The record gives the reactivity of an RNA of 177 nucleotides to 2A3 and DMS. Reactivities are given for positions 27 through 126. The reactions ran in a buffer of 150 mM KOAc, 10 mM MgCl2 and 150 mM bicine (pH 8.5), at 24 C. It was measured as part of the RMDB libraries RFM100 and RFMREP. 2A3 adducts were read by reverse transcription with SuperScript II with manganese.

[RMDB]
RNA sequence: GGGAACGACUCGAGUAGAGUCGAAAAGGGUCAAGCAGGCUGUGCUAUUGAGCUCCGAAAUCACCACUCUCGCGUGCCGACCAUGUCCUGACAAGGGGAAGGCCACAUCGCGGGCGUCGCUAUGGGCUUGAACAUCAGUCUUCGGACUGAUGUUCAAAAAAGAAACAACAACAACAAC
Reactivity to 2A3 in 0.01 (KOAc 150mM, MgCl2 10mM, bicine 150mM(pH8.5), 24C), signal-to-noise 3, nucleotides 027 to 126: g040g000g020u040c030a040a000g010c010a030g060g010c010u070g010u040g070c010u050a070u090u160g010a010g010c000u010c020c010g030a060a030a020u100c030a060c030c000a030c010u010c000u010c000g040c010g040u050g000c010c000g050a070c020c000a020u100g110u120c020c000u060g050a080c100a080a100g010g000g000g050a000a090g010g020c000c030a020c000a040u110c020g010c000g030g030g010c030g060u070c010g000c020u050a050u100g000g050g000c000
Reactivity to DMS in 0.01 (KOAc 150mM, MgCl2 10mM, bicine 150mM(pH8.5), 24C), signal-to-noise 4, nucleotides 027 to 126: g000g010g020u000c020a080a110g020c060a060g000g000c030u010g030u030g000c030u030a060u020u000g030a070g010c030u010c030c020g000a050a070a100u010c130a050c100c050a060c050u000c050u010c070g010c060g020u010g000c100c040g000a120c030c010a090u020g010u000c020c000u000g030a130c280a090a060g000g000g000g030a080a080g020g030c030c070a080c110a080u030c050g010c050g010g000g000c100g030u010c050g010c040u000a090u020g000g030g020c050